[RMDB]
RNA sequence: GGGAACGACUCGAGUAGAGUCGAAAAUGUCCAACUUAUGCACUCCAUCCAACUUGUUUGCCAAAGCAAAUUCUUGGCAUUUGUAUCAGCCUGUUUCCUCUGAAGUUCAUCAUAUUAACCUAUUACACUGGCCUAUUAGCUUCCAGCAUUGAGAAGGAAACCUUUGAGCAUUCGUGCUCAAAGGUUUAAAAGAAACAACAACAACAAC
Reactivity to 2A3 in 0.01 (KOAc 150mM, MgCl2 10mM, bicine 150mM(pH8.5), 24C), signal-to-noise 2, nucleotides 027 to 156: u110g050u050c020c000a050a020c120u140u120a040u110g070c000a020c040u030c050c000a010u000c000c000a000a040c060u100u140g020u120u130u050g030c000c000a040a180a000g070c040a030a130a180u220u060c030u050u000g000g000c000a030u090u020u140g050u000a060u060c050a020g000c050c000u060g010u030u100u030c020c010u020c030u020g020a020a000g070u070u050c020a050u040c000a000u050a010u290u020a050a040c010c020u040a050u110u150a100c040a020c130u100g070g020c000c000u100a120u220u090a070g040c020u100u000c020c020a000g060c050a160u020u080g040a040g000a080a000g090g010
Reactivity to DMS in 0.01 (KOAc 150mM, MgCl2 10mM, bicine 150mM(pH8.5), 24C), signal-to-noise 1, nucleotides 027 to 156: u000g020u000c030c030a100a150c080u000u020a060u010g010c040a120c030u020c020c000a130u000c030c040a090a090c060u000u010g020u000u000u000g010c000c020a080a120a100g020c020a060a060a100u000u000c090u000u010g000g010c020a090u000u000u020g050u020a100u010c080a060g040c010c000u000g030u000u000u010c020c030u000c010u000g010a060a110g030u000u000c040a090u000c060a160u000a080u010u000a030a100c020c030u010a060u000u010a020c050a010c010u010g040g040c050c040u000a110u010u000a080g000c040u000u000c000c020a070g010c080a100u020u000g000a180g000a110a030g030g000
This 207-nucleotide RNA was probed chemically with 2A3 and DMS.